[RMDB]
RNA sequence: GGGAACGACUCGAGUAGAGUCGAAAACUCGAACGGUUCGCCGUUCGAGAAAAGCGCGUCAGCGCUACGAUGCAAGGGCAAGCGCGUGCAUCGUAAAUGAAAAAACUUGUGUGUUCGCACACAAGAAGCUACUAGCUCAGUUCGCUGAGCUAGUAGCAAAAGAAACAACAACAACAAC
Reactivity to 2A3 in 0.01 (KOAc 150mM, MgCl2 10mM, bicine 150mM(pH8.5), 24C), signal-to-noise 3, nucleotides 027 to 126: c000u010c000g000a000a000c000g000g010u040u050c160g040c060c010g000u000u000c010g000a000g020a010a040a000a000g000c040g000c000g140u210c130a150g000c000g000c010u010a010c010g010a000u000g010c000a020a050g190g120g000c110a240a170g170c090g050c000g130u010g030c010a000u000c000g020u020a040a060a130u190g030a060a030a020a020a000a050c010u010u000g000u010g010u000g020u040u030c150g040c080a000c000a000c000a000a010g010a010a010
Reactivity to DMS in 0.01 (KOAc 150mM, MgCl2 10mM, bicine 150mM(pH8.5), 24C), signal-to-noise 1, nucleotides 027 to 126: c000u010c000g000a010a010c000g000g000u000u010c300g040c010c000g000u000u020c020g000a040g020a010a040a030a210g030c000g000c010g020u000c210a080g010c010g040c020u000a030c030g010a000u000g000c000a100a040g000g020g010c040a220a140g000c110g010c020g020u000g000c010a000u000c010g010u000a020a030a080u040g020a000a070a100a110a110a080c010u020u010g000u010g010u000g000u000u030c210g000c000a030c010a000c000a040a010g000a030a100